Structure probing data (2A3 and DMS) for a 177-nucleotide construct. The RNA was probed in 150 mM KOAc, 10 mM MgCl2 and 150 mM bicine (pH 8.5) at 24 C. For DMS the reverse transcriptase was MarathonRT. Source: RMDB library RFM100, as collected in RNAgym. For 2A3 the reverse transcriptase was SuperScript II with manganese. High 2A3 reactivity points to a flexible backbone, as in loops and unpaired stretches.
RNA sequence: GGGAACGACUCGAGUAGAGUCGAAAAGGUGCUACCGACCCGAGGUCAAGUCCCGGGGGAGGAGAAGAGAGGCUUCCCGCCUAGAGCAUUUGCAAGUCAGGAUUCUCUAAUCCCUCUGGGAGAAGGGAACGAGGUUGGUUUUCGAACCAACCUCGUUAAAAGAAACAACAACAACAAC
Reactivity to 2A3 in 0.01 (KOAc 150mM, MgCl2 10mM, bicine 150mM(pH8.5), 24C), signal-to-noise 1, nucleotides 027 to 126: g090g000u080g070c060u060a120c000c000g020a020c000c000c020g110a050g000g050u070c070a020a120g090u010c000c000c000g020g030g000g000g000a000g000g000a000g010a090a000g030a000g000a000g010g000c010u000u040c000c060c050g040c000c000u190a170g000a020g030c070a080u030u010u200g020c090a020a000g000u040c030a000g050g020a020u030u000c000u000c000u010a000a260u000c000c000c000u010c040u060g030g090g010a000g010a050a000g000g020g000
Reactivity to DMS in 0.01 (KOAc 150mM, MgCl2 10mM, bicine 150mM(pH8.5), 24C), signal-to-noise 2, nucleotides 027 to 126: g010g050u000g030c110u040a030c000c000g000a200c040c000c020g000a120g000g010u000c060a080a100g000u000c000c010c000g000g000g000g000g000a070g000g050a000g020a010a010g020a300g000a020g000g050c020u000u000c030c140c300g000c040c000u020a090g000a210g010c000a110u000u020u020g040c140a010a000g030u020c000a040g010g020a300u000u000c000u000c000u000a050a110u000c020c000c000u020c020u030g060g000g000a010g080a060a120g000g000g000